[RMDB]
RNA sequence: GGGAACGACUCGAGUAGAGUCGAAAAGCAACGAGCGUAAUCGCGUCUUGACUAGGGAGACUGUAGGUGACGUGAGUAUCUAUCCCAGUGUGCUUAGCGCACAAUACGCUGAUCUACAGUCAAUUAAGCAGAAUACAAGAUUCGUCUUGUAUUCUGCAAAAGAAACAACAACAACAAC
Reactivity to DMS in 0.01 (KOAc 150mM, MgCl2 10mM, bicine 150mM(pH8.5), 24C), signal-to-noise 6, nucleotides 027 to 126: g010c070a050a060c050g010a040g010c020g010u000a060a100u000c020g010c020g010u000c010u000u000g010a140c140u010a120g010g010g010a160g010a020c000u000g010u000a010g010g010u000g000a020c020g010u000g010a070g010u010a060u010c160u000a090u000c010c030c010a160g010u000g020u000g000c010u010u010a130g010c100g000c000a000c010a050a060u010a110c020g010c010u010g010a040u000c010u000a010c010a010g010u000c010a100a110u010u010a060a170
Reactivity to 2A3 in 0.01 (KOAc 150mM, MgCl2 10mM, bicine 150mM(pH8.5), 24C), signal-to-noise 8, nucleotides 027 to 126: g070c030a020a040c070g110a010g010c010g040u070a070a100u110c020g000c000g060u010c020u070u160g100a130c070u120a100g080g090g050a170g010a020c000u000g000u010a000g000g030u010g010a010c010g010u020g010a030g050u070a070u060c080u060a100u040c010c010c010a010g020u020g000u000g020c020u110u160a080g030c030g000c070a000c000a000a010u050a010c010g010c010u020g000a020u000c000u010a010c000a010g020u010c010a010a050u140u040a110a020